[RMDB]
RNA sequence: GGGAACGACUCGAGUAGAGUCGAAAACUAAUUUCGAAGCUAGCGAUAGCCUGAUUGUCGGGCCCAUCGUUUGUCAUAACUCCGGAUAGAGAAAUAUAUUGCGGCAUAUAUAAAGUUGGAAUUUGACUAUCAACUGCGAAGACAUUAGACCGUUUAAGAAAGAGUCUGUAUUCGUACAGACUCUUUCAAAAGAAACAACAACAACAAC
Reactivity to DMS in 0.01 (KOAc 150mM, MgCl2 10mM, bicine 150mM(pH8.5), 24C), signal-to-noise 2, nucleotides 027 to 156: c020u010a110a140u010u010u000c010g020a020a040g000c000u000a050g000c050g030a090u000a060g010c010c010u050g020a230u010u010g010u000c030g030g010g010c010c060c040a060u010c030g060u010u000u000g060u000c100a080u000a090a030c020u010c010c010g000g000a120u000a160g000a200g000a110a070a120u000a050u020a060u010u010g020c040g000g020c100a090u000a070u000a090u000a040a040a100g010u000u000g020g020a060a100u000u000u000g000a060c050u000a150u010c020a010a050c020u000g010c070g000a030a120g000a080c090a090u000u000a070g010a100c010c020g010u010u010u000a090a300
Reactivity to 2A3 in 0.01 (KOAc 150mM, MgCl2 10mM, bicine 150mM(pH8.5), 24C), signal-to-noise 2, nucleotides 027 to 156: c000u020a050a000u050u110u060c020g130a110a020g000c030u020a000g010c000g010a020u000a010g020c010c020u040g040a110u130u170g250u150c020g010g000g010c000c090c040a000u020c000g020u000u050u100g020u010c010a020u030a150a040c000u000c030c020g060g010a030u080a030g120a030g060a080a190a000u120a020u000a000u070u050g040c010g080g000c040a010u040a000u010a010u040a150a180a000g010u070u050g080g000a080a050u080u050u050g010a010c020u030a060u160c030a020a020c030u020g000c030g080a080a030g030a010c010a050u010u020a000g010a010c010c000g110u120u180u130a110a000